[RMDB]
RNA sequence: GGGAACGACUCGAGUAGAGUCGAAAAGAUAUGGACAAGGACGAUGAGUGGUCACCUCGGAAACGAGGUGCCACGAGUCUGUCCUAAGUCAAACUGCUAGGGUAGACUUCGGUCUACCCUAGCAGAACUUCUUGAGUUAGUUCGCUAACUCAAGAAGAAAAGAAACAACAACAACAAC
Reactivity to 2A3 in 0.01 (KOAc 150mM, MgCl2 10mM, bicine 150mM(pH8.5), 24C), signal-to-noise 1, nucleotides 027 to 126: g080a070u300a120u300g090g000a000c040a000a040g010g000a000c010g000a000u040g030a020g010u020g000g020u300c070a000c010c000u020c020g000g010a050a070a020c000g010a020g000g030u000g020c010c020a000c000g000a000g000u000c020u020g000u050c010c000u020a030a020g010u000c020a050a110a080c000u010g000c000u000a000g000g000g000u010a010g000a010c010u070u090c230g010g010u000c000u000a000c000c020c020u010a000g000c000a000g020a000a000
Reactivity to DMS in 0.01 (KOAc 150mM, MgCl2 10mM, bicine 150mM(pH8.5), 24C), signal-to-noise 3, nucleotides 027 to 126: g020a210u010a060u000g020g010a030c010a180a050g000g000a020c010g000a000u000g000a300g000u000g010g010u020c020a000c000c000u010c010g010g000a130a100a130c000g020a010g010g020u000g010c010c000a000c010g000a220g000u000c000u010g010u010c000c000u000a010a050g020u000c000a120a150a230c000u000g010c000u000a010g010g010g000u000a000g000a010c000u010u000c180g040g010u000c000u000a000c000c000c000u000a010g020c000a000g000a030a090
Conditions: 150 mM KOAc, 10 mM MgCl2 and 150 mM bicine (pH 8.5), 24 C. An RNA of 177 nucleotides, treated with 2A3 and DMS and read out base by base. The 2A3 profile rests on 2,437 reads.